This 177-nucleotide RNA was probed chemically with DMS and 2A3. The reactions ran in a buffer of 150 mM KOAc, 10 mM MgCl2 and 150 mM bicine (pH 8.5), at 24 C. DMS adducts were read by reverse transcription with MarathonRT.
RNA sequence: GGGAACGACUCGAGUAGAGUCGAAAAUUAGGGGAUCGAAGAGGAUCAGAUACCCUCGUAGUCUUAACUAUAAACUAUGCCACUUAUGUGUUGUCUAACUCAUCUUUUUGAGUUUGGCAUUGCAUUAGACGUUAAUAGUCUUCGGACUAUUAACGUCAAAAGAAACAACAACAACAAC
Reactivity to DMS in 0.01 (KOAc 150mM, MgCl2 10mM, bicine 150mM(pH8.5), 24C), signal-to-noise 2, nucleotides 027 to 126: u020u000a020g010g020g020g020a030u000c010g020a140a130g000a140g010g000a100u010c160a160g020a120u000a120c000c000c000u010c010g040u000a050g010u000c080u000u000a080a170c200u000a110u000a040a090a040c020u000a040u000g000c020c020a120c140u010u000a030u000g020u000g000u000u000g020u010c000u000a020a030c000u000c000a020u000c300u000u020u000u010u000g000a020g000u000u000u000g000g010c020a020u000u010g010c000a050u000u000a080
Reactivity to 2A3 in 0.01 (KOAc 150mM, MgCl2 10mM, bicine 150mM(pH8.5), 24C), signal-to-noise 2, nucleotides 027 to 126: u070u020a000g000g020g010g000a000u040c030g030a100a030g100a090g210g070a050u040c040a020g070a080u140a110c010c000c000u000c010g010u010a010g010u020c060u090u130a170a130c110u060a060u150a180a070a030c020u020a030u080g020c000c020a110c060u150u090a010u020g030u000g010u030u010g010u020c000u020a000a000c000u000c000a040u030c100u050u230u060u050u040g000a000g000u000u010u020g000g010c000a000u000u080g000c010a020u000u100a080